[RMDB]
RNA sequence: GGGAACGACUCGAGUAGAGUCGAAAAUUUGGCGUUAGGAGGGCUGCUGGGUUUUGGAUGUGUAUUGAACAGGUCUUGGGUCUUACGCUGGGCCUGAUUGCCCCUAAUGCAUGGUGGAAGCUGACUCAGCACGGCAUCUGAAUGCACCGCUGUUGCCGUCAGUUCUAGGAUUCGUCCUAGAACUGACAAAAGAAACAACAACAACAAC
Reactivity to 2A3 in 0.01 (KOAc 150mM, MgCl2 10mM, bicine 150mM(pH8.5), 24C), signal-to-noise 1, nucleotides 027 to 156: u070u030u140g040g030c020g000u030u100a090g010g040a040g000g070g000c060u040g000c010u020g010g000g070u020u010u120u030g090g040a160u090g030u010g010u070a110u090u120g060a100a010c010a020g000g010u050c040u100u090g070g010g010u010c080u070u120a070c040g070c140u060g010g000g040c030c000u050g040a100u020u120g070c020c000c000c000u030a120a030u100g060c040a050u080g000g050u110g080g020a090a010g030c020u020g010a030c010u000c040a010g020c020a040c010g020g000c010a060u010c030u050g060a090a030u040g020c030a020c030c060g020c060u070g050u120u040g040c070c030